[RMDB]
RNA sequence: GGGAACGACUCGAGUAGAGUCGAAAAUUCAUGGAGACCCAUCCCACACUGGAUGCCUUACACUGUGACAUCGGCAAUGCCACUGAGUUUGACAAAAUAUUCCAAGAUGAGAUUGGGGAGGUGUCUCAUCCCUAGUCGCGUUCGCGCGACUAGGGAUAAAAGAAACAACAACAACAAC
Reactivity to DMS in 0.01 (KOAc 150mM, MgCl2 10mM, bicine 150mM(pH8.5), 24C), signal-to-noise 1, nucleotides 027 to 126: u000u010c010a140u030g000g010a060g100a000c000c000c000a000u090c050c000c070a040c080a000c080u010g010g000a000u000g070c070c000u000u000a000c060a170c000u000g000u000g000a120c000a000u050c060g000g000c300a150a100u010g000c000c090a000c000u120g000a090g000u070u000u000g000a230c140a030a000a240a100u060a230u020u000c000c000a000a120g000a300u080g000a020g000a200u020u010g000g000g010g000a030g000g020u060g000u050c000u010c070
Reactivity to 2A3 in 0.01 (KOAc 150mM, MgCl2 10mM, bicine 150mM(pH8.5), 24C), signal-to-noise 2, nucleotides 027 to 126: u060u020c030a040u070g090g000a000g000a000c000c000c010a090u050c020c000c000a000c000a000c020u000g000g000a080u010g050c000c000u010u010a020c080a000c000u040g000u020g070a010c020a040u060c140g150g060c000a000a160u030g010c000c000a020c000u010g000a000g090u080u030u120g000a000c000a000a030a000a040u210a160u100u000c000c000a050a110g040a200u070g000a040g100a200u040u200g000g000g000g000a000g040g030u120g000u000c000u020c010
Conditions: 150 mM KOAc, 10 mM MgCl2 and 150 mM bicine (pH 8.5), 24 C. An RNA of 177 nucleotides, treated with DMS and 2A3 and read out base by base. Values are in units of 0.01, from 0 to 300, in steps of 10. Source: RMDB library OK1LIB, as collected in RNAgym.